An RNA of 177 nucleotides, treated with 2A3 and DMS and read out base by base.
Values are in units of 0.01, from 0 to 300, in steps of 10.
2A3 adducts were read by reverse transcription with SuperScript II with manganese.
For DMS the reverse transcriptase was MarathonRT.
The RNA was probed in 150 mM KOAc, 10 mM MgCl2 and 150 mM bicine (pH 8.5) at 24 C.
RNA sequence: GGGAACGACUCGAGUAGAGUCGAAAAUGUUUUGUAAAGCAUAACUUAACUUUGGUCCAUCUACAGUAGUCACAGUUGAGACUGUUCUAACGGCACUUGUUGCUUGUGCAUCGACGGGCAACUUAACCUCUGUAGGAUUCUUCGGAAUCCUACAGAGAAAAGAAACAACAACAACAAC
Reactivity to 2A3 in 0.01 (KOAc 150mM, MgCl2 10mM, bicine 150mM(pH8.5), 24C), signal-to-noise 2, nucleotides 027 to 126: u020g000u000u050u050u080g130u140a180a090a050g000c010a030u060a260a060c000u080u050a060a000c000u100u040u100g020g020u020c030c030a070u000c060u100a090c070a100g080u170a030g010u070c030a020c040a070g030u000u050g110a120g010a130c010u000g010u040u000c050u070a200a020c010g070g020c030a030c060u060u150g010u030u020g030c010u060u020g050u010g080c060a180u120c060g040a020c010g030g000g000c000a020a010c000u050u070a030a020c000
Reactivity to DMS in 0.01 (KOAc 150mM, MgCl2 10mM, bicine 150mM(pH8.5), 24C), signal-to-noise 2, nucleotides 027 to 126: u000g010u010u010u000u000g010u000a120a090a090g010c060a050u000a100a100c060u010u000a060a070c020u000u010u000g020g000u000c040c020a080u000c090u010a090c100a090g020u000a040g010u000c040a070c090a050g000u010u010g000a050g020a060c040u000g000u000u000c020u000a080a100c120g000g010c020a040c160u000u000g010u000u000g010c050u000u000g040u000g000c140a090u000c160g000a090c050g000g000g000c030a000a020c020u000u000a070a120c230